[RMDB]
RNA sequence: GGGAACGACUCGAGUAGAGUCGAAAAACGCCACUCGCACUAACGCAGCAGCGAGCAGCGCAUUGGAGCUGGGUGCCACCGACGCCAGCUUCUUCGGGUCAGUGGGCAAGCCGAGCUGCUUCGCCGCCGAAUGGCUGGUAUUCGUACCAGCCAUUCGAAAAGAAACAACAACAACAAC
Reactivity to 2A3 in 0.01 (KOAc 150mM, MgCl2 10mM, bicine 150mM(pH8.5), 24C), signal-to-noise 2, nucleotides 027 to 126: a000c060g050c010c010a040c020u050c020g030c030a060c030u110a140a060c110g040c110a060g000c000a000g000c010g020a020g000c030a030g000c030g000c070a140u090u230g070g000a090g010c010u040g030g160g090u070g110c040c020a060c030c030g090a060c050g190c050c010a030g050c010u110u040c020u060u080c020g020g000g020u030c010a030g070u070g080g040g020c050a050a020g040c010c000g020a010g010c020u010g010c000u130u110c020g020c000c010g000c000
Reactivity to DMS in 0.01 (KOAc 150mM, MgCl2 10mM, bicine 150mM(pH8.5), 24C), signal-to-noise 3, nucleotides 027 to 126: a050c080g020c000c050a110c030u000c030g000c030a110c080u000a090a080c150g030c130a110g020c050a100g010c020g020a040g020c020a040g000c010g030c140a150u010u000g010g040a070g020c010u000g020g010g030u000g010c020c020a080c040c050g020a040c030g030c010c010a040g010c170u000u010c090u000u000c090g020g010g020u000c030a080g020u000g020g000g000c060a090a100g000c010c020g010a070g030c000u000g000c030u000u000c040g010c010c050g020c050
Conditions: 150 mM KOAc, 10 mM MgCl2 and 150 mM bicine (pH 8.5), 24 C. Structure probing data (2A3 and DMS) for a 177-nucleotide construct. For 2A3, 2,523 sequencing reads were counted.